[RMDB]
RNA sequence: GGGAACGACUCGAGUAGAGUCGAAAAGGCAAAUCGCUGUUGACGACGAGCAGGAUCGGCACGGUGCCGAGCAUCGUCACCGGCGCGAAAUCGUUGAGCGGAUCGAACGGCAGGCUUUUGUACAGCGUCAGUCCGAUCUGUUCGCAGAUCGGACUGAAAAAGAAACAACAACAACAAC
Reactivity to 2A3 in 0.01 (KOAc 150mM, MgCl2 10mM, bicine 150mM(pH8.5), 24C), signal-to-noise 1, nucleotides 027 to 126: g120g000c010a000a000a120u110c000g000c040u020g020u030u050g050a060c030g000a010c020g000a030g070c030a080g040g190a070u060c010g050g050c060a010c140g210g030u210g010c040c030g000a050g040c020a100u110c000g000u010c010a000c000c000g010g000c060g020c000g030a000a100a040u100c070g020u050u170g000a000g010c020g030g020a030u010c020g070a020a050c000g000g030c000a000g140g030c030u010u050u100u120g070u010a040c000a020g040c000g060
Reactivity to DMS in 0.01 (KOAc 150mM, MgCl2 10mM, bicine 150mM(pH8.5), 24C), signal-to-noise 2, nucleotides 027 to 126: g010g030c060a060a160a140u010c050g010c010u000g000u010u000g010a090c040g000a040c070g040a180g000c110a080g020g000a070u010c030g000g020c080a170c200g040g020u000g000c020c020g000a090g010c080a100u000c010g000u000c010a040c010c020g030g020c070g030c040g000a070a130a070u000c020g020u000u000g010a040g010c020g010g000a020u000c020g000a050a080c070g010g010c050a070g010g010c020u000u000u000u000g020u020a090c190a040g000c100g020